[RMDB]
RNA sequence: GGGAACGACUCGAGUAGAGUCGAAAAACGCAUCAUACGUGAUGCGAGAACUACAGUUCCGCUCCUCUAGCACACAGAGGUCAAUUGGGUGCGACCCCCCCAUCUCCCGUGGGUCAACGGGAACCAAAAAAGACCCUUUAGUUCGCUAAAGGGUCAACUUGGAAAUUAUGUUCGCAUAAUUUCCAAGAAAAGAAACAACAACAACAAC
Reactivity to 2A3 in 0.01 (KOAc 150mM, MgCl2 10mM, bicine 150mM(pH8.5), 24C), signal-to-noise 5, nucleotides 027 to 156: a010c000g000c000a000u000c000a010u050a170c200g100u080g050a020u070g020c030g010a090g030a010a030c120u260a090c050a100g010u020u010c020c020g040c040u060c010c010u020c020u030a050g050c060a020c000a010c010a090g010a010g030g030u050c020a030a050u100u100g060g030g000u020g030c020g250a300c010c010c000c000c000c000c000a040u040c020u010c020c000c000g000u010g000g050g030u110c050a010a000c000g000g000g030a000a000c010c020a000a020a020a060a030a020g000a010c000c000c010u000u010u000a010g000u030u020c100g000c160u010a000a000a000g000g000g000u000c000a000a000
Reactivity to DMS in 0.01 (KOAc 150mM, MgCl2 10mM, bicine 150mM(pH8.5), 24C), signal-to-noise 2, nucleotides 027 to 156: a230c040g000c000a000u000c000a150u030a080c180g030u020g020a020u000g000c000g000a080g020a100a070c040u000a080c050a140g010u000u000c010c000g000c030u010c000c030u000c090u010a140g010c050a080c080a050c060a060g000a070g010g000u000c060a070a130u020u020g020g020g020u000g010c050g000a290c020c000c000c060c010c000c000a070u000c060u000c010c020c000g070u000g000g010g000u000c160a080a010c050g000g020g010a050a050c080c040a030a060a080a080a170a110g000a020c000c000c010u000u020u000a020g010u000u010c300g040c010u000a020a010a030g000g000g000u000c000a000a010